[RMDB]
RNA sequence: GGGAACGACUCGAGUAGAGUCGAAAACUUCUUAAUAAGAGAAGUUAUCUCCUUUGUGUUGUUUAUAGUAACAAAACAAAUUUUGCUCGAAGUACUGUGACAGUACCUAGUCCUUACCGUUACAAGUUUCUUCCAUAUCAUUCGUGAUAUGGAAGAAAAAAGAAACAACAACAACAAC
Reactivity to 2A3 in 0.01 (KOAc 150mM, MgCl2 10mM, bicine 150mM(pH8.5), 24C), signal-to-noise 1, nucleotides 027 to 126: c000u000u000c000u020u070a300a210u130a250a070g030a000g010a020a000g000u020u020a050u010c140u000c000c060u000u000u090g040u150g020u000u000g010u000u030u000a270u030a020g020u010a000a000c020a110a060a100a030c270a020a110a040u120u250u030u100g070c050u050c040g110a040a030g030u030a000c000u010g180u130g300a110c060a080g000u060a060c000c040u030a000g000u090c000c000u050u260a090c120c030g030u050u000a000c000a110a060g000u020
Reactivity to DMS in 0.01 (KOAc 150mM, MgCl2 10mM, bicine 150mM(pH8.5), 24C), signal-to-noise 2, nucleotides 027 to 126: c000u010u000c010u000u000a110a160u050a130a150g000a000g010a010a010g000u000u000a110u020c170u010c030c060u010u000u020g000u000g030u000u020g000u000u010u000a040u020a110g030u010a060a030c010a020a070a010a080c160a040a090a180u000u010u010u020g000c090u010c030g040a130a200g000u000a020c010u000g000u040g000a110c160a030g000u000a030c050c030u050a250g000u000c040c010u040u000a070c170c120g000u000u000a050c100a100a070g050u000
The record gives the reactivity of an RNA of 177 nucleotides to 2A3 and DMS. The data come from the RNA Mapping Database (RMDB), libraries RFM100 and RFMREP. Reactivities are rounded to 0.1 and cut off at 0 and 3. For DMS the reverse transcriptase was MarathonRT. The 2A3 profile rests on 271 reads. 2A3 adducts were read by reverse transcription with SuperScript II with manganese. The RNA was probed in 150 mM KOAc, 10 mM MgCl2 and 150 mM bicine (pH 8.5) at 24 C.